[RMDB]
RNA sequence: GGGAACGACUCGAGUAGAGUCGAAAAUUCUACAACAUUGAGGACGUUUUCUUCCUCAUCGUCAAAUCCACCAAUCCAUUCAGCGAUAUCGUAUUUGGCGAUGUCUUCUUCUUUGAUGCCUCAAGAACCACCUAGCGAGCUUCGGCUCGCUAGGUGGAAAAGAAACAACAACAACAAC
Reactivity to 2A3 in 0.01 (KOAc 150mM, MgCl2 10mM, bicine 150mM(pH8.5), 24C), signal-to-noise 1, nucleotides 027 to 126: u070u000c010u140a080c030a060a000c000a120u000u120g010a000g070g080a060c040g000u000u010u120u000c000u020u000c000c020u000c000a010u000c060g000u010c030a000a000a010u030c060c120a110c000c070a040a000u010c040c000a140u140u300c080a000g040c020g290a010u010a000u120c100g010u080a000u030u010u040g000g000c000g000a000u010g020u000c010u040u000c000u070u000c040u090u000u210g060a060u050g030c000c000u150c000a010a040g030a070a030